RNA sequence: GGGAACGACUCGAGUAGAGUCGAAAAGACGUGGAGGUCUCGCGCCCUCCUUUGCGCGUAAGUACGUCGAAAUUCGGUGCUAUGGAUCGCACCGUUUGAUCCAUUAGAUAUCCGCUAUGUGCCGCGGUUGGGCAUUUACACUUACCCGAAAGGGGAAGCGUAUGCGGAUAUUCGUAUCCGCAUACGCAAAAGAAACAACAACAACAAC
Reactivity to 2A3 in 0.01 (KOAc 150mM, MgCl2 10mM, bicine 150mM(pH8.5), 24C), signal-to-noise 2, nucleotides 027 to 156: g010a000c030g000u050g040g100a000g010g040u010c030u030c030g010c030g030c000c060c010u150c010c040u080u030u270g030c010g000c000g000u060a110a000g020u030a010c030g070u000c040g050a030a020a030u090u030c010g000g040u000g030c000u000a030u130g080g050a040u140c050g000c030a080c090c000g000u010u000u030g020a010u030c010c000a000u020u170a050g030a040u050a030u090c040c070g030c060u010a050u110g080u050g010c050c000g010c030g010g000u060u070g030g000g000c000a010u000u020u110a040c080a050c020u050u120a120c000c010c010g050a110a040a030g030g000g000g010a020a000
Reactivity to DMS in 0.01 (KOAc 150mM, MgCl2 10mM, bicine 150mM(pH8.5), 24C), signal-to-noise 1, nucleotides 027 to 156: g000a050c060g060u010g040g000a100g040g030u000c010u010c080g010c080g000c040c040c000u000c060c040u000u000u000g050c000g000c030g080u000a070a130g000u000a000c070g010u010c060g020a050a120a140u000u000c020g020g000u000g030c020u000a300u000g000g000a120u000c080g030c040a300c100c060g010u000u000u000g040a130u000c020c010a040u000u000a090g020a180u000a080u000c020c000g000c080u000a110u010g010u000g010c010c060g000c000g010g000u000u000g000g000g000c030a060u000u010u010a100c030a030c060u000u000a150c010c000c020g040a070a120a160g020g000g000g000a020a040

Conditions: 150 mM KOAc, 10 mM MgCl2 and 150 mM bicine (pH 8.5), 24 C. The record gives the reactivity of an RNA of 207 nucleotides to 2A3 and DMS. Reactivities are given for positions 27 through 156. It was measured as part of the RMDB library OK3TST.